[RMDB]
RNA sequence: GGGAACGACUCGAGUAGAGUCGAAAACGUCGUGAACUAGCGACAAUGCUAUAGCUCCAUCGUUAUCUAACCGAAACAUCGUGACUAGUCGUAGAAUAGAACCAGGAGAGGCCGCUGGCAAACAAAGACGAGGUGUCUGAUUCGUCGGACGCCUCGUAAAAGAAACAACAACAACAAC
Reactivity to 2A3 in 0.01 (KOAc 150mM, MgCl2 10mM, bicine 150mM(pH8.5), 24C), signal-to-noise 9, nucleotides 027 to 126: c040g010u010c030g020u040g080a120a090c050u030a070g010c000g040a030c030a050a040u100g000c010u010a000u030a040g010c000u000c020c010a060u040c030g040u040u070a060u070c040u050a030a090c030c020g040a060a050a020c030a050u060c030g050u040g050a040c030u040a030g050u040c040g050u050a020g030a110a050u090a070g040a050a030c020c010a020g020g030a080g020a030g040g010c000c010g000c030u020g020g010c010a020a050a050c040a030a160a010g120
Reactivity to DMS in 0.01 (KOAc 150mM, MgCl2 10mM, bicine 150mM(pH8.5), 24C), signal-to-noise 9, nucleotides 027 to 126: c140g010u010c060g010u010g010a110a100c100u010a080g010c010g010a070c060a100a080u030g000c050u000a050u010a070g000c020u000c040c030a070u010c060g010u000u000a050u020c070u010a080a100c050c040g000a100a080a090c110a050u020c040g010u010g000a070c030u010a050g010u010c030g010u000a050g000a070a080u010a050g000a090a100c030c040a030g010g010a090g010a070g000g000c010c030g020c030u000g000g010c100a050a060a050c120a060a090a100g000